[RMDB]
RNA sequence: GGGAACGACUCGAGUAGAGUCGAAAACGGGUCGGCACGAAAUAACUGGUAUUUCCCUGCCAGUAGAGGCGCACCAUCACUUCGGUAUCGAAAUCCAUCCGCUUGCCGAUGGUGGCGUGUUUUGCCACUACGCGCAAGAGUUCGCUCUUGCGCGUAGAAAAGAAACAACAACAACAAC
Reactivity to 2A3 in 0.01 (KOAc 150mM, MgCl2 10mM, bicine 150mM(pH8.5), 24C), signal-to-noise 2, nucleotides 027 to 126: c010g020g000g090u100c030g030g020c010a010c090g110a090a050a050u190a080a030c020u010g010g010u030a080u020u030u000c000c010c010u020g000c010c000a000g020u010a020g030a050g020g030c000g000c020a020c010c000a030u040c010a010c070u060u050c010g000g020u070a070u050c050g050a060a080a090u080c040c020a050u060c060c020g060c110u050u080g000c010c030g020a030u050g000g010u010g010g000c030g000u050g050u040u100u030u060g000c000c000a000
Reactivity to DMS in 0.01 (KOAc 150mM, MgCl2 10mM, bicine 150mM(pH8.5), 24C), signal-to-noise 3, nucleotides 027 to 126: c090g000g000g010u000c050g040g020c020a080c160g010a090a080a130u010a080a050c030u000g000g010u010a040u000u000u000c000c000c000u000g000c010c010a010g000u000a090g000a100g000g010c030g030c040a060c020c010a030u000c030a040c160u010u000c030g000g010u000a060u010c060g000a010a070a060u000c140c090a110u010c040c030g010c170u000u010g000c050c000g010a060u010g000g020u000g000g000c040g000u020g020u010u000u010u000g000c040c050a160